Background: This 177-nucleotide RNA was probed chemically with DMS and 2A3. The reactions ran in a buffer of 150 mM KOAc, 10 mM MgCl2 and 150 mM bicine (pH 8.5), at 24 C. DMS adducts were read by reverse transcription with MarathonRT. In probing experiments dimethyl sulfate is read out at A N1 and C N3, which are open when not base-paired. The DMS profile rests on 24,408 reads.
RNA sequence: GGGAACGACUCGAGUAGAGUCGAAAAACGGACGCUGCGAGGUGAUCUGCUUUUCGGCCGAUCACACCGGUUCGUUCGCGGGCCUGGACCCGGCGCAUGCCCGGCUGGUCGUGCACGCGUGGCGGCACCCUAAAACGUAGUUCGCUACGUUUUAGGGAAAAGAAACAACAACAACAAC
Reactivity to DMS in 0.01 (KOAc 150mM, MgCl2 10mM, bicine 150mM(pH8.5), 24C), signal-to-noise 6, nucleotides 027 to 126: a100c040g000g020a020c010g020c070u010g010c080g020a130g010g000u000g000a010u000c000u000g000c010u000u010u030u060c200g000g010c010c060g000a010u000c010a010c030a070c020c010g010g000u010u010c010g010u000u000c040g020c060g000g010g010c010c050u030g020g000a140c060c020c020g000g000c040g000c090a060u000g000c170c020c030g000g000c130u020g000g020u010c040g010u010g000c040a050c060g000c030g020u010g000g010c040g010g000c090a230
Reactivity to 2A3 in 0.01 (KOAc 150mM, MgCl2 10mM, bicine 150mM(pH8.5), 24C), signal-to-noise 9, nucleotides 027 to 126: a000c020g010g020a010c020g020c140u130g030c070g080a100g020g060u010g010a040u000c000u010g020c030u160u130u170u240c100g020g000c010c030g010a010u020c010a010c010a040c010c000g040g040u070u070c020g010u010u000c030g000c020g040g020g020c010c030u080g080g050a170c030c000c000g030g010c030g000c030a060u120g020c010c020c000g030g000c080u130g020g050u130c020g030u040g020c020a030c060g030c020g010u040g050g020c000g010g000c020a060